RNA sequence: GGGAACGACUCGAGUAGAGUCGAAAACUCUCAAAUAGCGAACCCAAUAAAUAGGGACGCAUGGCAACCGAAAGCAACGCCCUUCGUCGCCCGCAAAUACUGUAUAUUUGUACAGACUCAAUAUUGCAAUACCGCUUGAGAGCCUUACGUUGAAGGCGUUCGUCUCAAGGUUCGCCUUGAGACGAACAAAAGAAACAACAACAACAAC
Reactivity to 2A3 in 0.01 (KOAc 150mM, MgCl2 10mM, bicine 150mM(pH8.5), 24C), signal-to-noise 1, nucleotides 027 to 156: c000u000c000u000c020a050a140a100u180a040g030c000g030a100a150c000c000c120a000a100u190a090a090a140u290a080g000g000g010a060c000g000c000a000u040g050g000c000a060a150c050c070g030a210a100a000g080c000a110a000c010g000c000c000c020u000u090c000g000u000c000g150c030c040c000g000c040a090a090a060u060a090c000u010g020u030a020u040a070u080u100u300g010u000a000c000a020g030a090c010u030c120a050a170u050a070u300u040g000c000a030a000u070a300c050c100g010c080u070u050g000a000g020a000g000c000c000u030u040a020c050g090u020u070g070a010a020g000g010c000

Chemical mapping of a 207-nucleotide RNA with 2A3. For 2A3, 337 sequencing reads were counted.